[RMDB]
RNA sequence: GGGAACGACUCGAGUAGAGUCGAAAAAGAUAUGCGUGAUCCACGGGAUAUCAAUAAUGAACAAAAUAAACGGGCACUGGCUGCCAUAUUCUUUAUGGCAAAAAUUCCAGCUGAACGUCAUAGCAUCAGCAUUAGUGAGCUGACCACUGAUGAAAAGGAGACUUUUAGUAUUCGUACUAAAAGUCUCAAAAGAAACAACAACAACAAC
Reactivity to 2A3 in 0.01 (KOAc 150mM, MgCl2 10mM, bicine 150mM(pH8.5), 24C), signal-to-noise 4, nucleotides 027 to 156: a000g050a020u060a010u060g080c000g030u030g060a200u140c090c020a040c050g050g040g020a010u010a010u040c030a070a060u180a160a100u170g090a090a060c070a080a140a030a030u200a080a100a000c010g010g020g000c010a000c020u000g020g020c030u010g000c000c010a010u000a010u070u100c140u150u240u000a000u000g000g000c000a000a090a030a070a070u170u040c020c000a000g010c160u010g010a030a000c010g030u030c040a030u050a120g060c040a040u050c020a020g050c020a020u040u040a030g030u030g090a030g000c040u030g120a020c010c020a010c020u060g020a030u020g040a100a070a050a070g100
Reactivity to DMS in 0.01 (KOAc 150mM, MgCl2 10mM, bicine 150mM(pH8.5), 24C), signal-to-noise 2, nucleotides 027 to 156: a130g020a080u010a040u010g010c050g070u030g020a150u000c100c050a130c030g030g040g010a060u000a090u010c010a080a110u010a050a120u000g000a110a170c040a090a120a080a090u000a040a060a070c030g010g000g030c120a030c010u000g050g040c270u030g000c020c010a020u010a000u010u000c180u010u010u000a020u010g000g070c000a010a040a080a040a150u000u010c010c050a020g000c030u010g040a060a070c090g020u000c030a060u010a120g010c030a020u000c020a070g010c000a060u010u000a130g060u000g000a090g090c050u000g000a060c000c000a090c060u010g000a060u000g000a050a120a120a110g050